[RMDB]
RNA sequence: GGGAACGACUCGAGUAGAGUCGAAAAUCUUGGUGGACGAGUAGUCGCGGUUGGGACUGAGGUGCCUACAACGUGUUUUUGAGUGGGCCUGUGUCUCUGUGUGCGCCGUGUGCGGAUAGCUUGCUAUUUAGCUAGACGAAUUCGUUCGUCUAGCUAAAAAAGAAACAACAACAACAAC
Reactivity to 2A3 in 0.01 (KOAc 150mM, MgCl2 10mM, bicine 150mM(pH8.5), 24C), signal-to-noise 3, nucleotides 027 to 126: u060c040u020u070g030g020u050g010g030a020c030g010a060g060u100a000g030u030c030g000c020g090g040u090u090g070g020g000a020c050u090g080a060g060g000u190g080c000c000u030a020c020a150a090c080g090u070g140u130u040u050u120u150g090a060g010u020g000g000g000c000c000u040g050u010g020u020c000u000c010u020g070u030g000u040g100c040g000c030c020g030u050g010u060g020c030g010g030a050u080a050g010c030u020u090g010c000u010a060u060
Reactivity to DMS in 0.01 (KOAc 150mM, MgCl2 10mM, bicine 150mM(pH8.5), 24C), signal-to-noise 3, nucleotides 027 to 126: u020c030u010u000g000g020u000g000g000a080c040g020a080g010u010a100g010u000c040g000c020g020g010u010u010g030g000g000a050c030u000g000a070g010g030u010g020c000c010u000a050c070a060a140c190g000u010g020u010u020u000u000u010g010a250g020u000g020g000g000c020c000u000g010u000g000u000c010u000c020u020g000u010g010u000g010c080g000c040c020g010u010g020u010g000c030g010g000a060u000a050g010c040u000u000g010c050u010a100u000
Structure probing data (2A3 and DMS) for a 177-nucleotide construct. DMS adducts were read by reverse transcription with MarathonRT. The reactions ran in a buffer of 150 mM KOAc, 10 mM MgCl2 and 150 mM bicine (pH 8.5), at 24 C. Source: RMDB libraries RFM100 and RFMREP, as collected in RNAgym. Values cover nucleotides 27 to 126.